RNA sequence: GGGAACGACUCGAGUAGAGUCGAAAACGCUGAAGUUUGCUGCCAGCAAUUUGCCGAUGCCAUACAGCAAAGGAUCUCCCGAGGCCAGCACCACAAUGGCGCGAUGCUUAUUGCUAUCCAGCCACUCCGUGUAAGCUCCAUUCGUGGAGCUUACACGAAAAGAAACAACAACAACAAC
Reactivity to DMS in 0.01 (KOAc 150mM, MgCl2 10mM, bicine 150mM(pH8.5), 24C), signal-to-noise 2, nucleotides 027 to 126: c300g000c030u000g000a130a090g000u000u000u000g040c020u000g010c020c010a070g000c040a080a200u000u020u000g010c040c030g000a300u000g000c050c050a080u000a100c270a090g000c010a000a000a290g000g020a050u010c140u000c000c020c010g030a180g000g030c090c000a060g010c030a050c100c150a140c130a060a120u010g030g000c010g010c300g030a010u000g000c030u010u010a110u010u030g010c010u010a040u000c030c110a240g020c030c050a070c100u010c170
Reactivity to 2A3 in 0.01 (KOAc 150mM, MgCl2 10mM, bicine 150mM(pH8.5), 24C), signal-to-noise 2, nucleotides 027 to 126: c020g000c040u060g030a110a050g130u130u190u130g040c010u000g000c030c020a010g000c040a100a140u040u030u090g030c030c010g050a040u050g000c000c030a110u180a280c090a110g030c000a050a020a000g020g050a040u030c040u000c040c000c020g010a070g020g000c050c000a010g000c030a030c000c040a100c030a080a200u150g000g000c040g000c020g050a030u040g000c050u130u210a160u300u230g000c010u070a040u060c010c000a020g000c020c020a060c040u070c020
Notes
Chemical mapping of a 177-nucleotide RNA with DMS and 2A3. For 2A3, 1,756 sequencing reads were counted. DMS adducts were read by reverse transcription with MarathonRT. The RNA was probed in 150 mM KOAc, 10 mM MgCl2 and 150 mM bicine (pH 8.5) at 24 C. Reactivities are given for positions 27 through 126. For DMS, 1,020 sequencing reads were counted.